[RMDB]
RNA sequence: GGGAACGACUCGAGUAGAGUCGAAAAGUCGGCGUCCGCGCUGGCCGCCAUCGCGAUCGAUUCGGGCGACGCCGUUGACGGUGAUUCGCCACUCAGCGUCAGCGCACGCCGCCACAGCGCGGCGAGGCCUCCCGUAGGGUUUCGACCCUACGGGAGGAAAAGAAACAACAACAACAAC
Reactivity to 2A3 in 0.01 (KOAc 150mM, MgCl2 10mM, bicine 150mM(pH8.5), 24C), signal-to-noise 1, nucleotides 027 to 126: g030u030c040g020g010c030g040u030c130c030g030c000g070c000u020g020g010c020c010g100c020c010a150u120c090g080c080g100a070u140c030g040a110u140u130c040g030g000g020c020g020a040c020g020c050c010g040u020u110g120a090c000g010g030u000g040a190u160u000c020g040c000c070a040c030u040c010a040g050c010g060u000c000a010g030c000g010c000a000c010g010c000c000g000c000c000a240c060a080g090c110g010c010g000g000c020g010a040g050g020
Reactivity to DMS in 0.01 (KOAc 150mM, MgCl2 10mM, bicine 150mM(pH8.5), 24C), signal-to-noise 1, nucleotides 027 to 126: g010u010c060g000g020c000g000u000c100c200g010c030g040c040u000g000g000c130c000g000c070c150a040u000c020g010c150g020a070u000c110g000a110u000u000c100g000g000g000c020g020a040c040g000c080c020g010u000u010g000a070c030g020g010u000g020a180u000u000c050g020c030c000a070c100u020c130a140g000c090g000u000c050a100g010c020g060c060a150c030g000c000c020g000c000c000a040c090a050g000c090g020c000g000g020c040g000a100g010g010